[RMDB]
RNA sequence: GGGAACGACUCGAGUAGAGUCGAAAAUUUACAUUAAGAUGAAAGAGGUUAAGUGAGUUGCUUAAAAAUCACUAGCUUGUGGCCUGGUGUGGUGGCUCACACCUGUAAUCGCAGCACUUUGGGAGGCCAAGGUGGGAGGAUUGCUUGAGGUCAGGAGACGAAGUAAGUAGUUCGCUACUUACUUCGUAAAAGAAACAACAACAACAAC
Reactivity to DMS in 0.01 (KOAc 150mM, MgCl2 10mM, bicine 150mM(pH8.5), 24C), signal-to-noise 1, nucleotides 027 to 156: u000u010u000a110c060a100u000u010a100a130g000a050u010g000a140a150a040g030a100g050g000u000u000a040a110g020u000g010a110g040u000u010g000c050u000u000a050a060a120a040a100u010c010a040c020u000a080g010c040u000u020g000u010g010g020c080c050u000g000g010u030g020u000g040g060u010g000g020c120u000c000a010c030a010c030c000u000g010u000a050a060u000c040g020c060a130g000c040a000c040u000u000u010g000g030g020a130g010g010c030c020a040a010g000g040u000g020g020g000a110g040g000a050u020u000g010c030u000u010g010a070g040g020u010c010a120g020g000a170g000
Reactivity to 2A3 in 0.01 (KOAc 150mM, MgCl2 10mM, bicine 150mM(pH8.5), 24C), signal-to-noise 3, nucleotides 027 to 156: u050u030u100a050c020a030u140u170a080a060g040a100u140g060a050a060a030g080a050g040g000u090u110a100a070g010u020g030a010g000u040u080g040c010u060u120a030a100a020a050a020u110c010a000c030u000a020g030c020u120u140g080u110g150g010c000c020u020g010g000u010g000u000g000g030u030g010g030c040u000c050a010c010a000c000c000u000g050u080a040a010u050c030g010c090a060g080c010a110c040u030u090u040g020g020g010a080g050g030c040c010a020a000g030g010u040g020g020g020a050g010g020a060u010u080g000c000u020u070g030a010g010g030u030c040a000g050g040a050g020
About this RNA
This 207-nucleotide RNA was probed chemically with DMS and 2A3. The reactions ran in a buffer of 150 mM KOAc, 10 mM MgCl2 and 150 mM bicine (pH 8.5), at 24 C. For 2A3, 1,519 sequencing reads were counted. For DMS, 2,779 sequencing reads were counted. High 2A3 reactivity points to a flexible backbone, as in loops and unpaired stretches.